[RMDB]
RNA sequence: GGGAACGACUCGAGUAGAGUCGAAAAGCAGUUCCGGAAUGGCCACUGCGAACACUUGACUCACGGAAAGUCCAGUCUUGUGGAUUAGGACGUUCUACUACCGGUGGGGCCAGUAGUUCGUCCGAAAGGCAAGCAGGAGCUUCGGCUCUUGCUUGCCAAAAGAAACAACAACAACAAC
Reactivity to DMS in 0.01 (KOAc 150mM, MgCl2 10mM, bicine 150mM(pH8.5), 24C), signal-to-noise 3, nucleotides 027 to 126: g010c040a050g010u010u020c010c010g030g020a150a110u020g030g000c100c120a050c000u000g010c020g010a060a100c170a030c090u010u010g000a060c010u000c130a080c060g010g010a080a120a110g000u000c030c120a080g000u020c050u000u000g010u010g000g000a140u020u010a140g020g000a020c000g000u000u010c010u010a020c010u010a170c050c000g010g030u010g020g030g020g000c170c090a000g000u000a000g000u000u010c000g000u000c000c000g000a040a030a090
Reactivity to 2A3 in 0.01 (KOAc 150mM, MgCl2 10mM, bicine 150mM(pH8.5), 24C), signal-to-noise 6, nucleotides 027 to 126: g030c010a000g000u070u020c050c030g050g210a220a210u240g100g020c070c040a040c010u010g010c020g030a070a030c030a000c020u010u020g010a000c000u010c080a080c060g030g050a260a090a010g040u050c010c010a000g020u000c010u050u070g020u030g040g080a100u070u090a060g000g000a000c000g000u010u000c000u010a000c000u010a030c000c050g240g120u280g070g150g040g040c050c010a000g000u000a000g000u000u010c000g000u000c000c000g000a010a020a020